Chemical mapping of a 207-nucleotide RNA with 2A3 and DMS. Source: RMDB library OK3TST, as collected in RNAgym.

[RMDB]
RNA sequence: GGGAACGACUCGAGUAGAGUCGAAAAGGGUGAGCACCAUAAAGUGUCUUAUUAUAUGUGAUAAACUUAUCACCGUUAUAUUUUGCGAUGGCGUAAAAAUCAGCACAUCGAUUCCAACGUUCGUAUAAUAGUAUUUCACUCCUUAUGGUCUGUUUACUGGGGAUUGUUAAUUCGUUAACAAUCCCCAAAAAGAAACAACAACAACAAC
Reactivity to 2A3 in 0.01 (KOAc 150mM, MgCl2 10mM, bicine 150mM(pH8.5), 24C), signal-to-noise 1, nucleotides 027 to 156: g150g000g000u010g010a010g000c040a010c010c000a000u020a010a060a010g020u030g010u060c050u080u050a020u030u010a020u000a010u040g000u000g010a010u010a020a300a060c150u150u060a050u000c010a010c000c000g000u070u000a070u020a030u130u150u070u120g120c040g010a010u010g050g000c020g010u050a010a050a000a050a270u080c040a020g000c010a020c000a130u020c000g020a050u040u090c040c020a010a020c020g030u080u090c020g010u020a010u010a030a090u010a010g070u070a110u050u130u090c010a000c000u100c050c000u000u000a010u000g020g020u040c060u020g000u020u040u040a020c030
Reactivity to DMS in 0.01 (KOAc 150mM, MgCl2 10mM, bicine 150mM(pH8.5), 24C), signal-to-noise 2, nucleotides 027 to 156: g010g010g060u040g020a090g030c080a090c010c030a030u000a020a080a080g000u000g020u000c020u000u010a020u010u000a070u000a080u010g010u010g000a100u000a050a220a140c160u000u000a040u000c030a010c040c020g020u000u010a130u000a170u000u000u000u010g030c040g000a060u000g000g000c050g000u000a030a040a030a090a050u000c070a150g000c110a060c120a090u000c060g020a110u000u000c050c040a140a050c030g020u010u000c110g010u000a010u020a050a040u000a040g030u000a120u010u010u010c050a020c020u000c050c060u000u000a050u000g010g030u010c030u000g020u000u000u010a050c050

DMS adducts were read by reverse transcription with MarathonRT.